[RMDB]
The record gives the reactivity of an RNA of 177 nucleotides to 2A3 and DMS. Reactivities are given for positions 27 through 126.
RNA sequence: GGGAACGACUCGAGUAGAGUCGAAAAGCAGAAAAAAUCUCAUCCAUUAAACGAUGGCUCACAGGUACAUUUGUUCCUGCAAGCACCAUAUCGCGUACAUGUUGAACACGCUGUUCACGUGCUUCCACUAUUGGAAUUGAUUCGUCAAUUCCAAUAGAAAAGAAACAACAACAACAAC
Reactivity to 2A3 in 0.01 (KOAc 150mM, MgCl2 10mM, bicine 150mM(pH8.5), 24C), signal-to-noise 9, nucleotides 027 to 126: g010c040a020g150a050a130a010a010a050a090u050c050u020c040a070u030c030c010a060u080u160a090a130a030c050g030a030u030g040g000c010u020c020a050c010a020g000g050u080a040c030a180u130u170u300g030u040u030c000c000u010g010c040a030a010g020c020a030c030c030a060u080a020u190c040g010c030g060u060a030c020a060u140g050u120u090g140a020a010c040a000c110g150c150u110g030u050u030c030a010c040g020u010g020c040u060u010c020c010a040
Reactivity to DMS in 0.01 (KOAc 150mM, MgCl2 10mM, bicine 150mM(pH8.5), 24C), signal-to-noise 9, nucleotides 027 to 126: g020c080a080g020a000a030a090a090a090a080u010c030u000c040a090u000c040c030a050u000u000a070a130a090c100g010a030u000g000g010c040u000c060a130c040a020g000g010u000a020c050a270u000u010u010g010u000u000c010c010u000g010c060a060a040g010c040a080c080c090a060u000a050u000c050g010c060g010u000a090c140a050u000g000u010u000g010a030a060c060a110c140g010c130u010g010u000u000c050a080c060g010u000g000c060u000u000c030c050a210